[RMDB]
RNA sequence: GGGAACGACUCGAGUAGAGUCGAAAAUAGGUCGUGUUCGCACGACCUAAGAUAAAAUGCAUAAAAUGCCAGUAAGCCGAAACACAAGGGAGUGCACCUGGCCUACGAUGUCGUUCGCGACAUCGAACACCGCAUAUUUGUUCGCAAAUAUGCGGUGAAAAGAAACAACAACAACAAC
Reactivity to DMS in 0.01 (KOAc 150mM, MgCl2 10mM, bicine 150mM(pH8.5), 24C), signal-to-noise 3, nucleotides 027 to 126: u000a000g000g010u000c000g050u000g000u010u000c220g020c000a000c010g000a020c000c000u010a010a050g000a130u000a060a070a110a040u020g010c060a080u000a050a050a060a160u000g010c020c020a010g000u000a080a130g010c000c020g010a130a040a160c130a080c200a120a140g000g000g000a180g020u010g000c030a120c200c030u020g020g020c030c220u010a080c020g000a010u000g020u000c000g010u000u000c230g020c030g000a010c040a000u000c000g000a090a170
Reactivity to 2A3 in 0.01 (KOAc 150mM, MgCl2 10mM, bicine 150mM(pH8.5), 24C), signal-to-noise 3, nucleotides 027 to 126: u050a010g020g000u000c020g010u000g030u060u060c190g000c060a010c040g000a000c000c000u010a010a000g000a000u110a020a110a040a030u060g010c030a000u130a240a200a040a050u110g010c010c000a010g050u100a060a080g070c030c030g050a130a170a010c130a040c040a140a080g120g050g000a110g050u100g020c020a010c010c030u020g000g000c000c010u020a040c010g000a010u010g000u010c020g020u020u060c160g010c000g080a000c000a010u010c000g010a020a010